[RMDB]
RNA sequence: GGGAACGACUCGAGUAGAGUCGAAAAAAUGCUUACAACAUUAUAGAUGUAUGAAUGGAUUAGAAGACACCAAAAAAUUAGAGGAAGCUGUCAGACAGGCAAAUGCAAAACAUCUGGAUUGUGUCCAUGAACAGAUGAAAUUGAUUCACCAAGGUAGGUAUUCAAAGCUGUUCGCAGCUUUGAAUACAAAAGAAACAACAACAACAAC
Reactivity to DMS in 0.01 (KOAc 150mM, MgCl2 10mM, bicine 150mM(pH8.5), 24C), signal-to-noise 1, nucleotides 027 to 156: a040a000u000g020c000u000u000a180c000a090a090c000a000u000u000a220u000a080g030a090u000g020u000a080u020g030a140a160u020g030g010a130u010u000a240g000a100a060g000a110c050a030c050c120a030a040a170a040a110a060u000u000a050g000a100g010g030a040a060g060c020u010g030u000c030a000g010a030c020a070g030g010c010a000a030a040u020g010c090a040a060a050a270c000a010u000c010u000g000g000a040u000u010g010u010g040u040c100c000a050u000g000a050a130c040a050g000a040u000g000a020a090a220u010u000g000a080u000u000c010a060c030c000a020a040g040g040u000a070g040
Reactivity to 2A3 in 0.01 (KOAc 150mM, MgCl2 10mM, bicine 150mM(pH8.5), 24C), signal-to-noise 2, nucleotides 027 to 156: a000a000u040g010c020u100u140a040c030a190a000c000a060u070u070a100u300a220g110a090u080g050u090a060u090g060a060a050u050g000g000a010u080u010a030g020a130a010g010a000c030a020c020c020a020a010a000a100a100a100u180u200a040g020a050g020g030a010a060g060c010u020g090u090c010a030g020a070c010a020g000g020c030a070a060a000u050g000c000a000a000a000a140c010a010u000c030u010g040g000a080u110u090g050u030g020u050c090c030a040u080g040a020a020c010a010g010a030u040g020a030a020a060u110u070g060a050u070u120c070a030c120c010a070a020g100g000u060a010g100